[RMDB]
RNA sequence: GGGAACGACUCGAGUAGAGUCGAAAAUCCACGCAGGGACGCUGUUUGAGUGGCCGGUCUCAAAGCGCGUCUAUGAGUGUAAGGAGUAUCGGCCGGAGGAUAACGUAGCCGUCGCCAACUGGCGGGACGGCGUCGGCUAUUUCGAUAGCCGACGCCGAAAAGAAACAACAACAACAAC
Reactivity to DMS in 0.01 (KOAc 150mM, MgCl2 10mM, bicine 150mM(pH8.5), 24C), signal-to-noise 2, nucleotides 027 to 126: u030c010c000a100c080g000c070a150g000g000g010a010c010g040c010u050g010u000u000u000g000a100g040u020g000g010c010c000g000g090u010c010u000c010a040a070a180g010c100g000c000g030u000c050u000a080u010g010a090g020u000g030u010a080a180g000g000a130g020u020a000u000c020g010g000c040c000g030g010a090g020g000a060u000a060a100c090g000u010a060g010c020c020g000u000c030g010c010c090a140a200c180u020g040g010c030g000g000g000a110
Structure probing data (DMS) for a 177-nucleotide construct. Conditions: 150 mM KOAc, 10 mM MgCl2 and 150 mM bicine (pH 8.5), 24 C. For DMS the reverse transcriptase was MarathonRT.